[RMDB]
Structure probing data (2A3 and DMS) for a 177-nucleotide construct. For DMS the reverse transcriptase was MarathonRT. The RNA was probed in 150 mM KOAc, 10 mM MgCl2 and 150 mM bicine (pH 8.5) at 24 C. 2A3 adducts were read by reverse transcription with SuperScript II with manganese.
RNA sequence: GGGAACGACUCGAGUAGAGUCGAAAACAUUCUGUGCGAGCAGUUUGCCGAUGGCUUCGCGAAUAGAAGGAUGCCAGUUAACGGCGCGAUUGACCGCGUCAUUGAGCGUCAGGUUGCCCGGCGCGGCAUAUAUUUGCCAGUUCGCUGGCAAAUAUAUAAAAGAAACAACAACAACAAC
Reactivity to 2A3 in 0.01 (KOAc 150mM, MgCl2 10mM, bicine 150mM(pH8.5), 24C), signal-to-noise 9, nucleotides 027 to 126: c030a050u090u050c010u040g070u060g030c010g030a040g010c010a020g010u060u080u080g050c010c020g090a090u080g030g000c020u050u050c050g040c030g160a090a100u140a150g080a090a020g070g010a010u050g020c000c000a020g020u060u120a110a060c050g010g000c020g000c010g040a050u080u220g070a120c070c020g000c010g010u020c010a060u030u140g060a050g020c010g040u050c030a040g040g070u080u100g040c010c020c000g020g000c030g000c000g030g000c000
Reactivity to DMS in 0.01 (KOAc 150mM, MgCl2 10mM, bicine 150mM(pH8.5), 24C), signal-to-noise 8, nucleotides 027 to 126: c070a080u020u010c020u000g010u010g010c080g020a070g010c050a040g010u010u010u010g000c020c020g020a160u020g000g000c020u010u010c030g000c030g010a110a120u020a110g000a120a080g010g000a050u000g010c010c010a080g020u010u030a080a110c130g010g000c020g000c040g000a110u030u030g010a130c140c030g000c020g000u000c010a110u010u010g000a110g010c020g010u010c030a100g010g000u010u010g010c040c030c020g000g010c040g000c040g000g000c150